[RMDB]
The record gives the reactivity of an RNA of 177 nucleotides to 2A3 and DMS. The reactions ran in a buffer of 150 mM KOAc, 10 mM MgCl2 and 150 mM bicine (pH 8.5), at 24 C. 2A3 adducts were read by reverse transcription with SuperScript II with manganese. The data come from the RNA Mapping Database (RMDB), libraries RFM100 and RFMREP. For DMS the reverse transcriptase was MarathonRT.
RNA sequence: GGGAACGACUCGAGUAGAGUCGAAAAACGGACUCACUACGGUGAGUCCGACAGCGGGAAACCUCUCCCCACCGAGAGGCAGCUAUCUGGAAGGAUAGACUAUACGGCUGAUGUACGCAUCAGCCGAAUGGAUCAGAUAGUUCGCUAUCUGAUCCAUAAAAGAAACAACAACAACAAC
Reactivity to 2A3 in 0.01 (KOAc 150mM, MgCl2 10mM, bicine 150mM(pH8.5), 24C), signal-to-noise 9, nucleotides 027 to 126: a010c010g010g010a000c010u000c010a000c010u050a020c170g100g000u000g000a000g000u000c000c000g010a000c000a020g130c150g010g000g020a050a140a080c000c000u000c010u010c000c010c010c030a090c050c060g020a010g000a010g010g010c010a020g080c010u000a000u000c000u030g050g050a040a010g030g000a010u000a010g000a010c020u080a070u060a220c010g000g000c000u000g000a000u000g030u050a020c290g010c120a000u000c000a000g000c000c000g000a000
Reactivity to DMS in 0.01 (KOAc 150mM, MgCl2 10mM, bicine 150mM(pH8.5), 24C), signal-to-noise 6, nucleotides 027 to 126: a140c030g000g020a020c010u020c000a010c000u010a110c180g050g050u000g010a020g010u000c000c000g000a020c130a050g010c170g000g000g010a120a060a070c000c000u000c000u000c000c010c000c050a130c150c150g020a020g020a010g000g030c050a080g010c000u000a010u000c000u000g000g050a300a090g000g010a000u010a000g010a170c170u030a100u060a140c010g000g010c000u000g010a010u000g010u030a130c170g020c000a010u000c000a000g010c000c000g010a000